RNA sequence: GGGAACGACUCGAGUAGAGUCGAAAAUCAAUUCUAUGGACGGUCACUUCUAAUGGAAAAUCCACAGUCCAGGAUGGUCUAUCUGGUGUUUUAUAAAAAAAUUCACACUCCAGAGGUGGCUACCACAUCAUAGUCGCGGUUUCGACCGCGACUAUGAAAAAGAAACAACAACAACAAC
Reactivity to 2A3 in 0.01 (KOAc 150mM, MgCl2 10mM, bicine 150mM(pH8.5), 24C), signal-to-noise 2, nucleotides 027 to 126: u130c030a020a110u200u090c040u090a170u160g000g050a070c140g030g010u020c010a020c020u050u030c030u110a090a090u090g020g040a020a040a050a060u000c030c020a030c000a030g000u000c020c000a010g110g000a050u060g080g110u010c060u100a070u020c020u050g020g060u020g060u030u000u120u090a150u240a060a150a050a040a000a040a040u080u090c030a050c000a010c070u030c010c000a020g010a030g000g000u000g000g000c030u030a040c020c000a020c020a060